[RMDB]
RNA sequence: GGGAACGACUCGAGUAGAGUCGAAAAACUCCUAUUCCAACACGUCCUCGUCGUACAGAGUGGUAACAUGUGUCACCACAUAUCCAAGCUUGGGUACACGAGCUUGACCCAACCCCUUGGGCGGAUGAAAACCAGAUUACGUUCGCGUAAUCUGGAACGUAACCUAAGAGUUCGCUCUUAGGUUACGAAAAGAAACAACAACAACAAC
Reactivity to 2A3 in 0.01 (KOAc 150mM, MgCl2 10mM, bicine 150mM(pH8.5), 24C), signal-to-noise 4, nucleotides 027 to 156: a000c090u070c040c000u070a120u090u060c040c020a080a030c060a020c080g060u040c000c010u030c000g040u030c020g010u060a070c040a050g070a030g040u040g010g000u070a090a030c040a110u140g080u030g060u170c060a030c060c010a020c000a070u100a040u040c040c020a050a030g020c070u050u030g090g000g090u080a070c060a010c040g060a020g010c030u040u090g040a080c000c000c000a010a090c000c050c000c000u020u040g020g000g000c040g070g000a070u110g080a040a020a040a070c000c000a000g000a010u000u000a010c000g010u030u060c200g000c000g110u000a000a000u000c000u000g000g000a000a000
Reactivity to DMS in 0.01 (KOAc 150mM, MgCl2 10mM, bicine 150mM(pH8.5), 24C), signal-to-noise 2, nucleotides 027 to 156: a050c030u020c010c000u000a160u000u000c040c050a110a130c070a110c090g010u000c010c010u000c070g040u000c060g000u000a110c080a110g020a190g020u000g000g020u000a010a000c030a190u020g000u000g000u000c030a100c070c010a010c030a080u000a060u000c030c060a040a140g000c030u000u000g020g030g000u000a140c100a040c020g010a080g030c030u000u000g010a190c030c010c000a100a060c020c010c030c090u000u000g000g020g040c070g000g020a080u010g010a120a090a120a100c020c000a010g000a010u000u000a000c000g020u000u030c270g030c020g050u000a000a000u010c010u000g000g000a020a040